[RMDB]
RNA sequence: GGGAACGACUCGAGUAGAGUCGAAAAGAAAGAAGAGCGGUGAUGAAUGCACGUAUUGCUCUGACACCUCUUAUGUUAGCGGUAAAUUUCCGUGCCGCGAUGAGUCCACUAGGAUCUCUGAGCUCAAGUUCCGAUAUUAGUUCGCUAAUAUCGGAACAAAAGAAACAACAACAACAAC
Reactivity to 2A3 in 0.01 (KOAc 150mM, MgCl2 10mM, bicine 150mM(pH8.5), 24C), signal-to-noise 9, nucleotides 027 to 126: g040a010a070a010g100a050a010g010a000g020c100g000g040u070g050a100u120g080a140a190u270g060c020a010c060g060u120a150u090u220g010c010u010c000u020g020a000c010a040c030c020u060c020u090u080a090u200g120u120u180a040g000c000g030g000u040a080a120a150u070u070u000c040c010g000u020g000c030c030g000c010g040a080u100g010a000g020u010c000c000a110c220u160a110g000g030a130u090c010u010c020u080g060a020g020c020u010c140a100a040
Reactivity to DMS in 0.01 (KOAc 150mM, MgCl2 10mM, bicine 150mM(pH8.5), 24C), signal-to-noise 9, nucleotides 027 to 126: g000a070a090a060g000a090a010g000a000g020c010g010g020u000g010a090u020g010a130a100u030g010c030a030c080g010u020a070u040u020g020c010u000c000u000g000a200c270a090c110c050u000c040u000u020a080u010g020u010u010a120g020c010g000g010u000a030a040a080u020u000u000c030c040g010u010g000c000c020g000c010g010a080u010g000a030g000u000c010c000a140c300u030a110g000g000a030u030c020u000c010u000g000a200g000c050u010c050a080a270
This 177-nucleotide RNA was probed chemically with 2A3 and DMS. Reactivities are rounded to 0.1 and cut off at 0 and 3. The data come from the RNA Mapping Database (RMDB), libraries RFM100 and RFMREP. DMS adducts were read by reverse transcription with MarathonRT. The RNA was probed in 150 mM KOAc, 10 mM MgCl2 and 150 mM bicine (pH 8.5) at 24 C.